[RMDB]
RNA sequence: GGGAACGACUCGAGUAGAGUCGAAAACAGGAGAAAAAAGAGCCUUACAUCGCACUUGCUUACCGUAUGACUAUGGAGCAAAUCAGGAUCGGGCGCAGUCAGUACAUUAGCGUAGUCCACACUUACAAGGCUUGCUCUGAAAUGGAUGUUUGGCCUGCGUAAGCAACCUCUUCGGAGGUUGCUUACGAAAAGAAACAACAACAACAAC
Reactivity to DMS in 0.01 (KOAc 150mM, MgCl2 10mM, bicine 150mM(pH8.5), 24C), signal-to-noise 1, nucleotides 027 to 156: c060a210g040g060a100g000a020a070a070a090a120a140g000a100g020c020c030u000u000a090c030a060u010c030g040c080a060c060u000u000g000c010u000u010a130c080c050g030u000a190u010g030a120c160u010a160u000g000g020a070g000c030a000a020a010u040c100a090g010g050a070u000c040g010g030g030c020g000c020a030g000u000c030a080g000u000a120c020a120u000u000a080g000c030g010u010a220g000u000c020c080a040c020a050c050u000u010a060c030a090a080g070g000c050u000u000g040c030u040c030u000g010a070a030a100u000g010g020a070u010g000u000u030u000g010g040c000c050u000g000
Reactivity to 2A3 in 0.01 (KOAc 150mM, MgCl2 10mM, bicine 150mM(pH8.5), 24C), signal-to-noise 2, nucleotides 027 to 156: c020a000g090g000a070g110a040a100a040a010a020a020g040a020g000c010c000u040u040a020c010a030u040c090g010c130a040c050u030u070g010c010u070u150a160c020c010g020u060a040u210g100a080c130u080a040u050g040g010a030g010c010a020a040a030u080c060a050g100g000a070u080c040g010g010g010c020g000c010a000g000u040c010a000g040u090a090c050a210u080u210a070g060c060g040u040a030g060u040c060c020a020c000a010c050u090u120a020c020a090a100g030g000c010u020u020g000c010u000c000u040g030a010a060a100u120g050g000a000u000g020u030u040u020g010g000c000c010u050g030
The record gives the reactivity of an RNA of 207 nucleotides to DMS and 2A3. For 2A3, 1,242 sequencing reads were counted. 2A3 is a SHAPE reagent: it acylates the 2'-hydroxyl of flexible nucleotides of all four kinds. Source: RMDB library OK3TST, as collected in RNAgym. Conditions: 150 mM KOAc, 10 mM MgCl2 and 150 mM bicine (pH 8.5), 24 C.